RNA sequence: GGGAACGACUCGAGUAGAGUCGAAAAGCUCGGAGACGAGCAAGGCUGACAAAACGGUGUCCCAACCUCCACGUGGUGUCGGCUGGAUAAUGCUGCAUUAUGUUGCAUUUAUCAACUGGGAAAGAAACAGGAGCCCAUUAUUCGUAAUGGGCUCCUGAAAAGAAACAACAACAACAAC
Reactivity to DMS in 0.01 (KOAc 150mM, MgCl2 10mM, bicine 150mM(pH8.5), 24C), signal-to-noise 1, nucleotides 027 to 126: g000c000u000c000g010g000a180g030a210c000g000a000g020c000a090a070g000g000c000u000g000a000c000a000a050a070a070c000g020g000u030g000u030c050c030c020a080a150c120c070u000c110c040a140c050g000u000g010g040u020g000u000c030g000g000c000u020g010g000a030u010a020a030u000g000c000u000g000c050a160u010u050a090u040g000u000u000g000c010a000u030u000u010a030u000c010a040a160c110u030g020g000g010a050a010a060g010a180a040a120
Reactivity to 2A3 in 0.01 (KOAc 150mM, MgCl2 10mM, bicine 150mM(pH8.5), 24C), signal-to-noise 2, nucleotides 027 to 126: g010c000u000c000g040g000a120g020a090c000g000a000g020c000a000a050g000g000c000u000g000a050c000a020a090a030a010c040g070g000u010g010u040c000c000c000a040a160c000c030u000c010c050a090c100g160u130g040g000u030g000u000c000g040g010c000u000g060g000a010u000a020a000u000g000c000u020g000c030a050u160u060a100u300g050u010u060g010c010a000u070u080u050a000u010c030a020a100c070u100g000g030g080a140a000a060g070a050a240a010